RNA sequence: GGGAACGACUCGAGUAGAGUCGAAAAGAUAUGGAUAUUAAAGCGCCUAAGACAGCUCGUCGGAAACGACGAGUCGAGGAACUACGCUAAUUAAUAUCCUAAGUCAAAACCAGGGUUCGCCCUGGAAGAGAACAUGAGUGUUCGCACUCAUGUUCUCAAAAGAAACAACAACAACAAC
Reactivity to DMS in 0.01 (KOAc 150mM, MgCl2 10mM, bicine 150mM(pH8.5), 24C), signal-to-noise 1, nucleotides 027 to 126: g000a020u030a300u000g000g020a020u010a000u000u000a020a010a070g020c000g000c020c130u000a190a110g000a060c300a120g000c000u000c010g010u000c000g000g000a070a020a140c000g000a020c000g000a000g000u000c000g020a020g000g000a110a050c120u000a190c050g000c020u010a010a070u000u000a000a010u000a010u000c010c000u000a030a080g000u000c020a070a050a120a160c000c030a000g000g000g040u000u000c300g000c030c010c000u000g000g010a060a090
Reactivity to 2A3 in 0.01 (KOAc 150mM, MgCl2 10mM, bicine 150mM(pH8.5), 24C), signal-to-noise 1, nucleotides 027 to 126: g010a000u040a030u090g020g020a010u000a010u020u040a050a080a030g050c070g000c090c070u100a120a110g080a040c010a020g030c000u010c000g020u000c000g000g000a080a000a030c010g000a030c000g010a000g010u030c000g020a050g040g000a120a070c080u160a050c300g000c040u020a180a190u110u010a010a000u010a000u010c010c000u000a080a030g030u010c000a000a050a040a140c000c020a000g040g000g010u020u090c300g180c000c000c000u020g000g020a010a060